The data come from the RNA Mapping Database (RMDB), library ARCHII. This 207-nucleotide RNA was probed chemically with 2A3. For 2A3 the reverse transcriptase was SuperScript II with manganese. The RNA was probed in 150 mM KOAc, 10 mM MgCl2 and 150 mM bicine (pH 8.5) at 24 C.

[RMDB]
RNA sequence: GGGAACGACUCGAGUAGAGUCGAAAAUUACGGGAUACGCUUGCCUAUCACACCUGAAUAAGCGAGAAGAGACUAACAGGUUAGCCGUGGCUGUUUGGCCCUGUCAUAUGGCGUUUUGCCCCGGUGAAGUUUAAAUAAUAUGACUAUGAUCGUAGAGGACAAUUAGCUGGUUCGCCAGCUAAUUGUCAAAAGAAACAACAACAACAAC
Reactivity to 2A3 in 0.01 (KOAc 150mM, MgCl2 10mM, bicine 150mM(pH8.5), 24C), signal-to-noise 2, nucleotides 027 to 156: u090u070a060c050g020g020g040a000u020a090c010g000c040u010u050g000c010c020u150a140u240c050a030c000a010c040c030u030g020a060a070u120a050a070g010c080g060a000g070a090a080g040a020g010a050c050u090a020a050c050a060g060g000u060u070a010g000c000c020g020u010g020g000c020u000g160u280u150u270g070g000c000c030c000u000g000u000c000a000u010a000u000g000g040c030g010u010u060u300u070g010c000c010c020c020g000g000u030g040a030a000g040u190u190u210a000a000a000u000a000a000u000a000u000g000a010c010u030a100u050g070a050u160c120g010u060a060g030a070g070